An RNA of 207 nucleotides, treated with 2A3 and DMS and read out base by base. Conditions: 150 mM KOAc, 10 mM MgCl2 and 150 mM bicine (pH 8.5), 24 C. Reactivities are given for positions 27 through 156.
RNA sequence: GGGAACGACUCGAGUAGAGUCGAAAAGACAGCUCAGCUGUUUCUGGUGGUUCAACAUAGCAGGGACAACGAGGCAUUCAGGGAGGCGUUGUUGAACAUCACCGAGCCUGAUGGGAGAUGGCUGUAUGAUCUGAUCAACAUCCUGCAAAGUAUUAUACAAUUAGAAACCUUUCGAGGUUUCUAAUUGAAAAGAAACAACAACAACAAC
Reactivity to 2A3 in 0.01 (KOAc 150mM, MgCl2 10mM, bicine 150mM(pH8.5), 24C), signal-to-noise 3, nucleotides 027 to 156: g010a000c010a000g000c050u050c200a020g000c020u040g040u040u040u030c030u020g030g020u030g020g000u050u070c050a030a030c020a090u100a060g020c020a020g040g020g040a030c020a090a030c080g040a040g010g080c070a050u090u120c080a090g030g010g030a030g050g000c040g040u060u050g000u010u010g050a030a020c030a050u160c010a010c030c030g020a030g050c010c010u110g050a100u110g020g010g020a040g000a010u040g020g000c020u020g020u050a090u030g030a060u040c020u070g030a090u060c010a000a070c010a060u050c010c010u010g030c030a070a040a040g050u030a030u180u160a170u190a050
Reactivity to DMS in 0.01 (KOAc 150mM, MgCl2 10mM, bicine 150mM(pH8.5), 24C), signal-to-noise 2, nucleotides 027 to 156: g020a090c000a140g020c050u000c010a100g030c010u000g020u000u000u000c020u000g050g030u010g010g000u000u000c040a040a110c090a100u000a140g020c070a100g000g040g030a100c050a060a090c080g000a080g000g030c050a090u010u000c070a120g010g010g010a120g040g010c040g030u000u000g010u000u000g000a050a120c040a050u000c010a040c010c030g000a130g040c020c070u010g010a090u000g000g020g010a120g020a080u000g000g040c010u010g030u000a080u010g010a100u000c040u030g010a180u000c040a060a100c050a100u000c030c030u010g000c080a060a070a120g010u010a100u000u000a140u000a190